[RMDB]
This 207-nucleotide RNA was probed chemically with DMS and 2A3. The RNA was probed in 150 mM KOAc, 10 mM MgCl2 and 150 mM bicine (pH 8.5) at 24 C. For DMS the reverse transcriptase was MarathonRT. For 2A3 the reverse transcriptase was SuperScript II with manganese.
RNA sequence: GGGAACGACUCGAGUAGAGUCGAAAAACAGGUUUCCAUGCCUCUUCUUUCCACUGCCGCUGCUGGCGUUUAUAUGCAUCCUAUGGCUGAACAUUGGGUUACCCUUUUGACACAGACUCAGGAUAUUUAUCAGCCUAGUAUGUUUAAUAUGGGUGUACAACUUUCGAGUUUUCGAACUCGAAAGUUGAAAAGAAACAACAACAACAAC
Reactivity to DMS in 0.01 (KOAc 150mM, MgCl2 10mM, bicine 150mM(pH8.5), 24C), signal-to-noise 1, nucleotides 027 to 156: a090c040a050g010g000u000u010u030c070c110a130u000g020c040c010u010c050u000u010c060u010u020u010c000c030a110c100u010g010c000c050g000c020u010g050c040u030g040g000c090g040u010u000u010a070u000a060u020g000c000a010u000c040c020u010a100u030g040g070c000u000g050a070a080c130a280u020u000g020g000g000u000u000a090c040c060c010u000u010u010u020g030a180c100a140c040a150g010a070c020u000c040a010g050g010a110u010a040u010u000u000a070u000c010a060g030c010c000u000a070g020u000a040u010g010u010u010u000a010a130u020a070u000g000g010g000u010g040u000a120
Reactivity to 2A3 in 0.01 (KOAc 150mM, MgCl2 10mM, bicine 150mM(pH8.5), 24C), signal-to-noise 2, nucleotides 027 to 156: a000c010a040g020g010u030u070u110c010c000a030u060g000c000c000u000c020u050u040c030u020u100u040c030c010a060c100u120g010c050c030g090c080u200g000c070u040g060g020c010g020u000u160u040a150u060a060u180g050c010a010u000c030c000u020a060u300g000g000c030u020g010a060a020c020a110u010u100g010g000g040u050u160a130c030c010c000u120u130u090u170g100a050c090a030c020a140g050a060c010u000c020a020g000g040a070u000a080u110u230u050a190u100c020a000g000c000c000u000a000g000u000a010u010g000u090u050u100a100a100u120a100u090g020g010g020u100g040u000a020